[RMDB]
RNA sequence: GGGAACGACUCGAGUAGAGUCGAAAACUCGCGACCCCAUUGAGGCGUGGGGAGCGACAUGAAUCAGCCUCGAUUAGAUGUGGUCGACAGUACUGCGGCGUACAGCGACCUAGUUAGAAGCCGCAAAACCGGAAGAGAUGACGCUCGACGGACGUCAGGCCUCCGUAUGGUUCGCCAUACGGAGGCCAAAAGAAACAACAACAACAAC
Reactivity to 2A3 in 0.01 (KOAc 150mM, MgCl2 10mM, bicine 150mM(pH8.5), 24C), signal-to-noise 1, nucleotides 027 to 156: c000u000c000g000c000g000a300c000c000c000c000a010u090u080g030a000g000g000c000g000u000g010g000g000g020a020g000c000g070a020c030a190u230g090a000a160u140c000a050g000c000c000u000c010g000a110u120u220a140g080a130u150g040u060g030g000u020c020g030a130c000a020g000u000a000c040u000g010c000g050g000c000g000u050a000c000a030g010c000g000a070c000c000u000a030g010u050u060a070g060a220a000g030c000c000g000c000a030a030a030a030c000c030g050g030a050a000g000a000g000a010u130g150a050c000g020c110u000c050g040a010c040g070g070a010c010g000u030c020a010
Annotation:
Chemical mapping of a 207-nucleotide RNA with 2A3. 2A3 adducts were read by reverse transcription with SuperScript II with manganese. Reactivities are given for positions 27 through 156.